[RMDB]
RNA sequence: GGGAACGACUCGAGUAGAGUCGAAAAGAUAUGGAGCAGGAUCAGCAUCGAUCUACUGUAUCGGAAACGAUAUGUAGGGAGCUGACUGCUCCUAAGUCAAACGUUCGUAGGUUCGCCUACGAACGAAGAUCGCAGUAGAGUUCGCUCUACUGCGAUCAAAAGAAACAACAACAACAAC
Reactivity to DMS in 0.01 (KOAc 150mM, MgCl2 10mM, bicine 150mM(pH8.5), 24C), signal-to-noise 1, nucleotides 027 to 126: g040a000u000a010u010g000g010a030g000c000a000g000g020a240u000c010a010g040c020a300u010c200g020a010u000c000u000a020c000u020g020u010a000u020c030g000g000a000a000a000c000g030a020u000a010u000g000u000a010g000g010g010a000g040c000u010g000a070c000u000g000c000u000c000c000u000a000a050g000u000c000a120a080a300c030g000u000u000c000g010u000a000g000g040u000u030c230g040c000c000u000a000c000g000a000a000c000g000a080a050
Reactivity to 2A3 in 0.01 (KOAc 150mM, MgCl2 10mM, bicine 150mM(pH8.5), 24C), signal-to-noise 2, nucleotides 027 to 126: g020a020u000a030u040g010g010a000g020c000a000g130g110a220u210c010a000g000c010a030u300c130g000a010u000c020u000a000c000u100g070u110a030u000c020g000g020a000a020a000c010g010a000u010a020u110g000u010a010g000g000g000a000g000c000u000g020a030c010u000g000c000u000c000c000u020a000a010g000u000c030a030a080a150c010g010u000u000c020g000u000a000g060g030u050u100c300g140c040c020u010a000c000g000a000a000c000g010a040a020